The data come from the RNA Mapping Database (RMDB), library TTRDES. Structure probing data (DMS and 2A3) for a 177-nucleotide construct. For 2A3, 6,493 sequencing reads were counted. For DMS, 3,426 sequencing reads were counted. 2A3 adducts were read by reverse transcription with SuperScript II with manganese.

RNA sequence: GGGAACGACUCGAGUAGAGUCGAAAAGAUAUGGACGACUGUAGGGAGACUUCGAUCGGAAACGAUCGUUAGUCAUCGAUCUAUUGGUCGUCCUAAGUCAAAAGAAUGAUAGUUCGCUAUCAUUCAACUUAACUAACGACUUCGGUCGUUAGUUAAGAAAAGAAACAACAACAACAAC
Reactivity to DMS in 0.01 (KOAc 150mM, MgCl2 10mM, bicine 150mM(pH8.5), 24C), signal-to-noise 3, nucleotides 027 to 126: g010a020u000a210u010g000g000a050c010g020a020c010u000g010u000a010g000g000g020a100g010a020c000u000u000c000g000a000u020c000g020g020a080a040a130c000g020a010u000c000g010u020u000a010g020u000c000a210u020c300g030a120u020c000u010a020u000u010g070g000u010c010g020u000c010c010u010a000a080g000u000c030a080a050a140a130g000a020a010u000g000a020u000a000g010u000u010c300g030c010u000a010u000c000a000u000u000c000a120a180
Reactivity to 2A3 in 0.01 (KOAc 150mM, MgCl2 10mM, bicine 150mM(pH8.5), 24C), signal-to-noise 3, nucleotides 027 to 126: g020a000u050a030u080g000g000a010c000g020a010c000u010g020u020a010g040g140g070a190g000a030c010u010u000c000g000a000u010c010g000g000a040a020a020c000g000a010u000c000g000u050u030a020g020u000c020a050u300c080g060a120u040c000u010a040u090u300g050g000u000c000g010u000c000c000u000a020a000g000u000c000a020a000a020a170g020a000a000u000g010a000u000a010g080u080u140c300g010c200u030a010u000c000a000u020u000c000a010a020